[RMDB]
RNA sequence: GGGAACGACUCGAGUAGAGUCGAAAAUGCAAUUCUCUCGCACUAUAAACCCAAGGAAUCGUGGACUUUCAGCCUCUGAAGUGUUCAGCACUUUUGAUAGACCAAUGAAUGCUGCCAUAAAUAGCUCCUAAACCAAAGAGUUCGCUCUUUGGUUUAGAAAAGAAACAACAACAACAAC
Reactivity to 2A3 in 0.01 (KOAc 150mM, MgCl2 10mM, bicine 150mM(pH8.5), 24C), signal-to-noise 3, nucleotides 027 to 126: u050g000c010a030a130u210u030c050u010c040u040c070g060c030a030c040u030a040u070a250a190a110c010c010c030a040a080g070g050a060a070u100c060g040u080g010g000a020c000u080u060u030c080a020g030c030c010u050c020u030g030a040a020g040u010g040u120u110c090a070g090c020a030c000u030u060u030u080g080a100u070a090g070a030c050c010a060a080u100g050a050a020u050g010c030u020g020c020c010a040u060a140a140a030u070a080g010c020u040c030
Reactivity to DMS in 0.01 (KOAc 150mM, MgCl2 10mM, bicine 150mM(pH8.5), 24C), signal-to-noise 4, nucleotides 027 to 126: u010g010c090a080a100u010u010c100u010c070u010c100g020c050a060c070u000a110u010a050a130a140c030c010c010a100a130g000g000a080a050u000c090g030u000g000g010a060c030u000u000u010c040a060g010c050c050u010c040u000g000a030a020g020u000g000u000u000c180a110g010c000a030c030u000u000u010u010g010a090u000a090g010a090c060c090a040a080u000g010a100a050u010g000c040u010g000c070c050a040u020a050a060a110u000a090g020c080u010c070